[RMDB]
RNA sequence: GGGAACGACUCGAGUAGAGUCGAAAAGGAUCUGAGUACUUAUAAGUGCGAAGUGAGUGAGGGUCUUACGAGCACUAAUUACAUCCCUCUAUUAAGUAUCGAAGAUCGGCCGGAGAUCGAGAUACAACUAUUAGCCGGCGACUGUACGAAGAUCCGAGCAUAUCACGCUAUUCGUAGCGUGAUAUGCAAAAGAAACAACAACAACAAC
Reactivity to DMS in 0.01 (KOAc 150mM, MgCl2 10mM, bicine 150mM(pH8.5), 24C), signal-to-noise 1, nucleotides 027 to 156: g000g030a030u010c000u010g000a300g000u000a060c000u010u000a090u010a130a030g060u000g010c060g010a110a300g000u000g000a170g000u040g000a180g130g030g000u030c100u000u000a060c030g000a300g000c030a030c010u000a000a100u000u000a200c030a070u000c000c000c000u000c080u000a140u000u000a030a070g020u010a030u000c000g000a130a300g000a060u010c040g000g000c060c070g000g000a250g000a060u010c000g000a300g000a070u000a010c100a100a080c040u010a110u000u030a110g000c000c010g040g010c100g060a040c140u000g000u010a040c070g030a300a030g030a080u040c000c000g040a070
Reactivity to 2A3 in 0.01 (KOAc 150mM, MgCl2 10mM, bicine 150mM(pH8.5), 24C), signal-to-noise 3, nucleotides 027 to 156: g000g000a000u000c000u030g010a010g000u010a010c040u090u100a200u110a300a020g000u000g010c020g020a090a010g010u020g000a010g000u120g000a000g010g020g010u140c000u000u000a000c000g000a000g000c000a000c040u080a060a140u180u070a080c050a140u100c000c020c000u030c020u010a120u160u200a140a030g010u000a000u010c000g030a080a020g020a010u020c040g080g010c000c010g000g010a100g000a030u010c020g000a010g000a020u000a010c010a030a000c030u080a050u190u070a010g070c000c000g000g010c030g050a080c070u090g010u010a000c000g000a000a010g000a000u000c000c000g000a000
Conditions: 150 mM KOAc, 10 mM MgCl2 and 150 mM bicine (pH 8.5), 24 C. An RNA of 207 nucleotides, treated with DMS and 2A3 and read out base by base. In probing experiments dimethyl sulfate is read out at A N1 and C N3, which are open when not base-paired.